This 177-nucleotide RNA was probed chemically with DMS and 2A3. For DMS the reverse transcriptase was MarathonRT. The DMS profile rests on 2,722 reads. For 2A3, 2,362 sequencing reads were counted.
[RMDB]
RNA sequence: GGGAACGACUCGAGUAGAGUCGAAAACAAGGAUGGAAAUGAUUAACAAUCCAAGUACAGCAUAAAUAAACGUUCUUGUUGUUUACAUCAUUGAUAUUCCUUUCAAUCUAUUAAAUUUUAUUUUUCCUAUUAACACGCGAUUCGUCGCGUGUUAAUAAAAAGAAACAACAACAACAAC
Reactivity to DMS in 0.01 (KOAc 150mM, MgCl2 10mM, bicine 150mM(pH8.5), 24C), signal-to-noise 2, nucleotides 027 to 126: c300a040a030g000g000a020u000g010g030a120a020a000u000g000a000u000u010a030a000c030a020a000u030c300c060a000a060g010u020a020c000a110g010c150a140u010a070a150a130u010a070a120a160c140g010u000u000c040u010u000g000u030u000g000u000u000u010a020c150a010u000c020a010u000u010g000a220u120a030u010u000c010c000u000u000u020c050a050a050u030c100u020a030u000u010a020a030a080u030u020u000u040a120u030u020u000u000u000c010c030
Reactivity to 2A3 in 0.01 (KOAc 150mM, MgCl2 10mM, bicine 150mM(pH8.5), 24C), signal-to-noise 5, nucleotides 027 to 126: c080a010a000g010g000a010u020g000g070a040a010a010u010g010a010u030u050a000a000c010a010a030u080c160c010a010a010g020u020a020c010a100g090c070a070u120a150a200a020u200a050a170a040c070g010u010u010c000u000u000g020u000u030g030u010u040u020a050c060a010u010c000a000u000u000g030a020u020a050u180u110c030c000u030u080u050c000a040a090u020c080u150a120u110u230a190a100a170u110u150u040u110a180u070u070u000u040u000c000c000